[RMDB]
RNA sequence: GGGAACGACUCGAGUAGAGUCGAAAAGUGUUAUAAUUCUGAUUAUGCGUCCAAAGGGUAUAUUGCUAAUAUAAGCGCCUUUCAACAGGUGUUAUAUUAUCAAAAUAACGUAUUUAUGUCAGAAGCCAAAUGUUGGGUUGAACAGGACAUAAAUCAACCCUAAAACGUAGUUCGCUACGUUUUAGGGAAAAGAAACAACAACAACAAC
Reactivity to 2A3 in 0.01 (KOAc 150mM, MgCl2 10mM, bicine 150mM(pH8.5), 24C), signal-to-noise 3, nucleotides 027 to 156: g020u040g060u180u090a120u080a210a160u080u040c020u000g000a010u020u110a020u130g010c000g010u000c060c080a140a070a120g120g040g060u140a140u040a050u160u050g020c000u010a010a010u070a000u070a090a100g160c000g000c010c020u040u120u230c130a100a070c040a100g000g020u000g000u020u000a000u000a000u000u040a030u050c000a000a060a100a130u100a010a050c010g000u020a020u040u150u020a090u120g000u020c000a010g020a030a020g050c030c050a050a100a050u130g020u070u110g020g020g000u030u000g020a070a020c050a080g060g090a010c010a070u150a020a090a000u030c020a010a090
Reactivity to DMS in 0.01 (KOAc 150mM, MgCl2 10mM, bicine 150mM(pH8.5), 24C), signal-to-noise 1, nucleotides 027 to 156: g040u000g000u010u000a070u000a060a070u000u000c030u010g000a090u000u030a060u020g000c020g000u010c030c040a120a130a130g040g020g030u000a120u010a150u000u010g030c090u000a010a010u020a010u010a030a090g060c030g060c000c000u000u000u000c260a130a090c300a030g060g010u000g000u010u000a010u030a010u010u000a050u000c020a000a030a130a070u000a030a040c010g020u010a080u010u000u010a010u020g020u010c030a050g010a120a090g050c010c020a050a030a090u010g030u020u000g000g000g010u020u000g010a080a150c090a140g000g000a090c030a040u000a040a040a070u010c050a020a240
An RNA of 207 nucleotides, treated with 2A3 and DMS and read out base by base. The RNA was probed in 150 mM KOAc, 10 mM MgCl2 and 150 mM bicine (pH 8.5) at 24 C. For 2A3 the reverse transcriptase was SuperScript II with manganese. For DMS the reverse transcriptase was MarathonRT. It was measured as part of the RMDB library OK3TST.